[RMDB]
RNA sequence: GGGAACGACUCGAGUAGAGUCGAAAACUCCGGAAGGACAUCUAAAGUUUAUUGCCAUGGAGAUUAUGAUAAAGUGAGGUUUUAUCCUUAUUAUUGAUUUAAAGACGGAUACAAUUUAACGGUUUGACCCGUAUACUGAAUUCGUUCAGUAUACGGGAAAAGAAACAACAACAACAAC
Reactivity to 2A3 in 0.01 (KOAc 150mM, MgCl2 10mM, bicine 150mM(pH8.5), 24C), signal-to-noise 6, nucleotides 027 to 126: c030u010c010c010g010g050a060a060g060g010a020c010a040u110c070u200a180a110a030g060u060u100u070a150u160u160g110c020c020a050u120g040g000a040g020a040u070u130a100u200g130a050u070a100a130a020g030u020g040a040g010g110u000u070u070u120a050u060c000c010u000u040a040u070u030a050u030u070g100a100u020u060u280a080a190a010g090a020c030g000g020a000u010a040c020a030a030u050u090u160a180a040c060g050g000u030u030u100g050a040
Reactivity to DMS in 0.01 (KOAc 150mM, MgCl2 10mM, bicine 150mM(pH8.5), 24C), signal-to-noise 4, nucleotides 027 to 126: c020u010c010c040g000g030a100a060g000g000a050c040a040u030c130u050a090a120a120g000u000u000u000a030u020u020g010c000c050a170u010g010g000a080g000a130u010u030a050u020g010a110u030a020a060a090g010u000g000a050g000g000u010u020u010u000a020u000c020c000u000u010a130u000u000a050u010u060g000a150u020u010u010a080a030a060g000a080c220g020g020a040u000a050c050a020a040u000u020u010a140a040c090g000g000u000u010u000g000a190

Background
Structure probing data (2A3 and DMS) for a 177-nucleotide construct. Source: RMDB library OK1LIB, as collected in RNAgym. Conditions: 150 mM KOAc, 10 mM MgCl2 and 150 mM bicine (pH 8.5), 24 C. For DMS the reverse transcriptase was MarathonRT.